[RMDB]
RNA sequence: GGGAACGACUCGAGUAGAGUCGAAAAAACACGUGGGUACGGCCCAGUGGGGGGGAGAGGGACACGCCCUCGGCUCUGCCCAGGGUGCAGCCGGACUGACUGAGCCCCUGUGCCGCCCCCAGAUAAAUACAAAUAUUUGGUUCGCCAAAUAUUUGUAAAAAGAAACAACAACAACAAC
Reactivity to DMS in 0.01 (KOAc 150mM, MgCl2 10mM, bicine 150mM(pH8.5), 24C), signal-to-noise 3, nucleotides 027 to 126: a050a050c060a060c090g010u000g000g000g010u000a090c060g000g010c010c030c000a110g020u000g010g000g000g010g000g000g000a140g010a100g000g000g020a090c120a300c100g000c020c010c010u000c300g000g000c000u000c210u010g000c010c000c050a080g010g010g000u000g010c060a030g010c020c000g030g020a180c160u000g020a060c020u000g010a270g020c010c000c010c000u000g000u010g030c000c020g010c100c010c000c000c000a050g010a060u000a040a070a110
Reactivity to 2A3 in 0.01 (KOAc 150mM, MgCl2 10mM, bicine 150mM(pH8.5), 24C), signal-to-noise 1, nucleotides 027 to 126: a000a000c060a000c030g080u060g020g000g000u080a060c060g090g020c020c030c000a010g060u130g010g010g000g000g000g020g000a100g010a030g030g000g000a020c050a010c110g030c000c000c010u000c000g020g000c020u030c120u300g070c010c030c000a010g010g000g020u050g020c020a010g080c020c020g090g060a090c050u080g020a030c020u020g030a020g060c000c000c000c010u000g030u120g070c000c000g180c010c010c010c000c000a000g000a060u160a040a080a000
About this RNA
Structure probing data (DMS and 2A3) for a 177-nucleotide construct. High DMS reactivity at an A or C suggests that its Watson-Crick edge is free. 2A3 adducts were read by reverse transcription with SuperScript II with manganese. For DMS the reverse transcriptase was MarathonRT.